Chemical mapping of a 177-nucleotide RNA with 2A3 and DMS.
The RNA was probed in 150 mM KOAc, 10 mM MgCl2 and 150 mM bicine (pH 8.5) at 24 C.
The 2A3 profile rests on 2,055 reads.
For DMS the reverse transcriptase was MarathonRT.
[RMDB]
RNA sequence: GGGAACGACUCGAGUAGAGUCGAAAAGUAUGCCAUUACUACCAUCCUUAACUACAUCAUUAUUGCUGUUGGUGCGAUGACGGUGUUCGGAUCGCUGGGCGUCUCUUGGGAUAAACUCCAGUGGCUGCUGUCACUAGCUAUUCGUAGCUAGUGACAGAAAAGAAACAACAACAACAAC
Reactivity to 2A3 in 0.01 (KOAc 150mM, MgCl2 10mM, bicine 150mM(pH8.5), 24C), signal-to-noise 2, nucleotides 027 to 126: g030u010a040u120g120c030c010a020u060u170a050c020u010a050c020c030a050u010c020c000u070u160a060a050c030u040a010c060a030u020c000a010u040u150a110u110u130g010c030u000g050u190u140g100g050u080g040c000g020a020u050g000a010c000g000g000u030g010u140u120c010g030g030a110u090c040g000c030u020g030g020g020c010g020u000c010u020c000u040u120g060g010g010a030u100a080a090a030c040u020c030c000a040g010u020g080g000c030u040g000
Reactivity to DMS in 0.01 (KOAc 150mM, MgCl2 10mM, bicine 150mM(pH8.5), 24C), signal-to-noise 3, nucleotides 027 to 126: g030u000a040u000g010c080c080a100u000u000a070c060u000a110c080c020a080u000c010c060u000u000a080a110c090u010a050c050a020u010c040a060u000u010a100u010u000g010c030u000g000u010u000g020g020u000g020c010g020a050u000g000a040c050g020g030u010g000u000u000c100g010g000a060u000c080g030c060u040g000g010g020c070g030u000c030u000c050u010u020g000g010g000a040u010a050a060a110c140u010c010c030a020g010u010g000g000c020u010g000